[RMDB]
RNA sequence: GGGAACGACUCGAGUAGAGUCGAAAAUCACCACAGCCCGAUCCCCAGCUGACGAUGCCUUGCAGGGUGAGCCGGCGCUCUGCAGCUUGGUCCUCACACACCAGCGAGCCUCCGGAAUCACCCUGGGUCGGAAACGCGCAGCUCAGCGCUGUGGACAAAAUAUAAUGGCGUUCGCGCCAUUAUAUUUAAAAGAAACAACAACAACAAC
Reactivity to 2A3 in 0.01 (KOAc 150mM, MgCl2 10mM, bicine 150mM(pH8.5), 24C), signal-to-noise 1, nucleotides 027 to 156: u160c020a070c040c000a020c020a030g000c000c110c170g040a100u050c020c000c020c010a000g000c000u000g040a120c010g060a060u190g060c000c000u070u110g060c000a030g060g000g000u000g070a000g060c030c000g010g000c020g020c010u020c050u110g060c050a110g060c040u150u260g030g050u000c080c020u170c020a050c000a010c030a020c100c000a060g010c010g000a000g000c010c010u120c020c000g000g050a030a100u020c020a000c080c000c000u000g010g000g080u120c030g020g000a010a180a010c100g080c000g000c000a000g020c000u000c020a080g000c010g000c040u000g000u000g000g020a020c020a010
Reactivity to DMS in 0.01 (KOAc 150mM, MgCl2 10mM, bicine 150mM(pH8.5), 24C), signal-to-noise 2, nucleotides 027 to 156: u010c040a210c010c020a030c000a020g020c000c020c030g000a170u000c010c000c020c210a200g040c010u000g030a110c010g030a170u010g000c020c010u000u020g020c020a010g010g030g030u000g000a080g010c000c020g000g070c300g000c020u000c000u020g030c030a060g000c060u010u000g020g000u000c070c060u030c180a160c070a130c110a060c010c020a250g050c020g000a060g010c010c130u000c020c000g020g000a090a080u000c020a030c030c020c000u020g030g020g010u000c080g020g010a070a050a110c000g020c040g010c000a120g000c030u000c060a100g010c080g000c020u000g070u000g020g000a190c090a080
Notes
Chemical mapping of a 207-nucleotide RNA with 2A3 and DMS. Source: RMDB library OK3TST, as collected in RNAgym. For 2A3, 616 sequencing reads were counted. The RNA was probed in 150 mM KOAc, 10 mM MgCl2 and 150 mM bicine (pH 8.5) at 24 C.